[RMDB]
RNA sequence: GGGAACGACUCGAGUAGAGUCGAAAAGAAAAGGUAUCACGAAUAAAGAGAGAGAGCAAGUGAUACCAACGUUGAGAGACGGAAAAGACUACUCGAGCUCUCUCUCGAAGAAGAGUAGUCAAAGAAAGGGUAAUACUAUGUUCGCAUAGUAUUACCCAAAAGAAACAACAACAACAAC
Reactivity to 2A3 in 0.01 (KOAc 150mM, MgCl2 10mM, bicine 150mM(pH8.5), 24C), signal-to-noise 3, nucleotides 027 to 126: g050a000a070a000a030g000g000u000a000u010c000a000c000g070a140a030u270a170a300a020g010a000g000a000g000a000g000a000g020c010a190a120g000u000g000a000u000a000c000c010a050a020c020g000u020u050g040a040g000a020g020a070c030g040g060a080a030a060a000g000a000c010u000a010c000u010c010g010a010g000c010u000c000u000c000u010c000u000c030g070a040a040g040a030a000g000a000g000u000a010g020u050c100a030a030a000g100a030a040a040
Reactivity to DMS in 0.01 (KOAc 150mM, MgCl2 10mM, bicine 150mM(pH8.5), 24C), signal-to-noise 3, nucleotides 027 to 126: g010a070a090a100a090g040g010u010a000u000c000a020c010g020a170a070u050a010a080a080g010a060g010a040g010a000g020a040g000c000a240a090g010u000g000a020u000a010c000c000a030a030c020g010u000u000g000a160g000a250g000a020c030g020g000a080a070a080a070g010a020c000u010a000c010u010c000g010a130g020c000u000c010u010c010u000c000u000c030g000a040a080g000a080a050g010a010g000u000a010g010u010c000a090a120a160g000a090a090a100
This 177-nucleotide RNA was probed chemically with 2A3 and DMS. Values cover nucleotides 27 to 126. DMS adducts were read by reverse transcription with MarathonRT. The reactions ran in a buffer of 150 mM KOAc, 10 mM MgCl2 and 150 mM bicine (pH 8.5), at 24 C. For 2A3, 4,457 sequencing reads were counted.